[RMDB]
RNA sequence: GGGAACGACUCGAGUAGAGUCGAAAAGUGCAGUGUUAAUCAUGCUAAGGGGCUAGCAUGAACCAAGGGACGGGUGGAAUAAAAAACCAUUUAAAGCGACAGGUACACUGCUAGCUAACUCAAUGCAAUCUAUGGUAACCUUCGGGUUACCAUAGAUAAAAGAAACAACAACAACAAC
Reactivity to DMS in 0.01 (KOAc 150mM, MgCl2 10mM, bicine 150mM(pH8.5), 24C), signal-to-noise 3, nucleotides 027 to 126: g000u020g020c010a030g000u010g000u010u000a110a160u000c050a080u000g000c010u030a090a160g010g000g000g010c130u000a030g000c010a020u010g000a050a100c040c060a100a080g000g000g000a210c130g000g010g040u010g000g000a070a030u040a040a060a140a140a110a050c010c010a040u000u000u000a100a090a200g000c050g000a150c130a030g020g020u010a050c030a060c070u020g000c010u000a040g000c020u000a060a120c020u010c070a090a100u010g010c140a120
Reactivity to 2A3 in 0.01 (KOAc 150mM, MgCl2 10mM, bicine 150mM(pH8.5), 24C), signal-to-noise 2, nucleotides 027 to 126: g060u070g000c020a000g020u010g040u140u130a120a060u060c030a010u030g000c000u040a050a080g040g040g000g000c020u020a000g010c000a000u010g010a010a010c000c010a090a090g070g010g020a030c080g000g000g000u020g000g000a030a020u130a180a050a030a010a010a020c030c000a030u060u030u090a300a300a010g020c020g040a030c020a030g000g030u020a010c020a010c020u010g010c000u010a010g010c010u040a110a110c020u010c060a050a060u100g060c020a040
Structure probing data (DMS and 2A3) for a 177-nucleotide construct. The data come from the RNA Mapping Database (RMDB), library OK2TRN. Conditions: 150 mM KOAc, 10 mM MgCl2 and 150 mM bicine (pH 8.5), 24 C. DMS adducts were read by reverse transcription with MarathonRT. Values are in units of 0.01, from 0 to 300, in steps of 10. The 2A3 profile rests on 1,976 reads.